This 177-nucleotide RNA was probed chemically with DMS and 2A3. Conditions: 150 mM KOAc, 10 mM MgCl2 and 150 mM bicine (pH 8.5), 24 C. 2A3 adducts were read by reverse transcription with SuperScript II with manganese. Source: RMDB library TTRDEL, as collected in RNAgym. The DMS profile rests on 601 reads.
[RMDB]
RNA sequence: GGGAACGACUCGAGUAGAGUCGAAAAGAUAUGGAAUUGAACUACAAUUUGACAGCUCGAAGAACUCGGAAACGAGGGAGAGCUGAGAAUUGCAAUUCCUAAGUCAAAAGAUGGCUUCGGCCAUCAACUCUAGUGUGUCGUUCGCGACACACUAGAGAAAAGAAACAACAACAACAAC
Reactivity to DMS in 0.01 (KOAc 150mM, MgCl2 10mM, bicine 150mM(pH8.5), 24C), signal-to-noise 1, nucleotides 027 to 126: g000a000u000a300u030g000g000a000a000u000u000g020a030a000c130u050a300c000a020a000u000u000u000g000a210c140a000g010c020u010c030g000a130a120g030a190a300c020u000c020g030g000a110a130a180c000g000a020g000g000g000a100g010a000g000c000u020g000a300g000a010a000u000u000g050c000a000a000u000u010c000c000u020a030a140g000u000c020a030a060a140a210g000a000u030g000g000c000u020u000c220g000g000c000c030a020u000c000a020a100
Reactivity to 2A3 in 0.01 (KOAc 150mM, MgCl2 10mM, bicine 150mM(pH8.5), 24C), signal-to-noise 1, nucleotides 027 to 126: g010a050u110a040u180g000g020a000a000u040u030g000a090a040c050u210a070c300a000a020u010u000u110g300a220c000a010g000c010u000c010g240a300a100g000a020a060c010u000c020g000g060a080a080a000c010g010a000g030g000g040a040g010a030g020c000u000g000a000g020a000a010u010u020g000c000a000a000u000u000c000c000u030a110a060g050u020c030a030a030a060a140g000a000u000g010g000c040u120u180c300g140g000c000c000a000u030c000a000a020